[RMDB]
RNA sequence: GGGAACGACUCGAGUAGAGUCGAAAACGAGAUGAGUUCGCUCAUCUCGAAAGAACCGCGGGCGUGACUCGGUCAGAGCAUGACAGGCGCUGCGGUCACCAAAAAGUGGUGUGUUCGCACACCACAAGUUGCCCCUUUAGUUCGCUAAAGGGGCAACAAAAGAAACAACAACAACAAC
Reactivity to DMS in 0.01 (KOAc 150mM, MgCl2 10mM, bicine 150mM(pH8.5), 24C), signal-to-noise 1, nucleotides 027 to 126: c000g010a010g010a010u000g000a000g020u010u020c230g090c000u010c000a030u000c000u000c000g000a020a040a080g020a100a070c020c000g000c020g000g000g000c000g050u000g000a170c060u000c190g040g020u000c030a080g010a210g000c070a080u000g000a070c100a080g060g000c000g000c010u000g010c010g010g000u000c000a040c020c030a040a030a020a200a030g000u000g000g000u010g060u000g050u000u000c300g030c020a010c000a000c000c000a000c000a010a050
Reactivity to 2A3 in 0.01 (KOAc 150mM, MgCl2 10mM, bicine 150mM(pH8.5), 24C), signal-to-noise 2, nucleotides 027 to 126: c020g000a000g000a020u010g000a000g030u050u150c240g060c110u000c020a010u040c000u000c000g000a010a010a000g020a070a010c000c000g000c040g040g040g030c030g030u050g140a180c020u050c170g090g020u050c040a020g040a060g160c180a080u070g010a020c000a020g020g050c010g000c020u010g010c000g010g010u000c010a040c010c000a000a060a050a060a060g020u020g000g000u020g000u000g010u020u110c180g040c050a000c000a010c000c000a010c000a010a000
Source information:
The record gives the reactivity of an RNA of 177 nucleotides to DMS and 2A3.